[RMDB]
An RNA of 177 nucleotides, treated with 2A3 and DMS and read out base by base. Source: RMDB library OK2TST, as collected in RNAgym. 2A3 adducts were read by reverse transcription with SuperScript II with manganese. For DMS, 7,906 sequencing reads were counted. DMS adducts were read by reverse transcription with MarathonRT.
RNA sequence: GGGAACGACUCGAGUAGAGUCGAAAAGGUCUACCGAGCCAGGCAAGGUUUGUGGCUUGACUAACCUGUGGCCCUCUAAUUUGGCCUUUAUGCUGGCCCAGAUUAGGGACAACCCUAUACUGCCAAGAGAACCUAUUUCUUUCGAGAAAUAGGUUCUAAAAGAAACAACAACAACAAC
Reactivity to 2A3 in 0.01 (KOAc 150mM, MgCl2 10mM, bicine 150mM(pH8.5), 24C), signal-to-noise 3, nucleotides 027 to 126: g040g000u030c010u020a020c030c020g010a010g040c010c030a040g020g060c060a080a120g090g050u040u060u080g110u090g030g050c040u020u040g010a040c020u040a020a020c000c010u090g050u070g280g010c020c010c000u020c010u020a010a040u020u000u030g020g000c010c010u040u110u080a270u260g140c140u090g010g010c060c030c000a020g010a020u000u010a000g010g000g020a030c020a030a100c000c000c020u030a050u050a110c070u050g010c000c000a080a010g100
Reactivity to DMS in 0.01 (KOAc 150mM, MgCl2 10mM, bicine 150mM(pH8.5), 24C), signal-to-noise 6, nucleotides 027 to 126: g010g010u010c050u010a080c100c050g000a050g010c020c010a070g010g000c060a110a090g000g010u000u000u000g020u010g020g000c050u000u000g010a110c100u000a070a040c020c010u000g010u010g010g010c040c060c010u010c020u000a020a020u000u010u000g000g000c020c000u010u010u010a080u030g020c240u000g000g010c110c040c040a010g000a040u000u010a010g000g000g000a080c110a090a150c020c010c020u010a100u000a090c160u000g010c030c040a140a160g000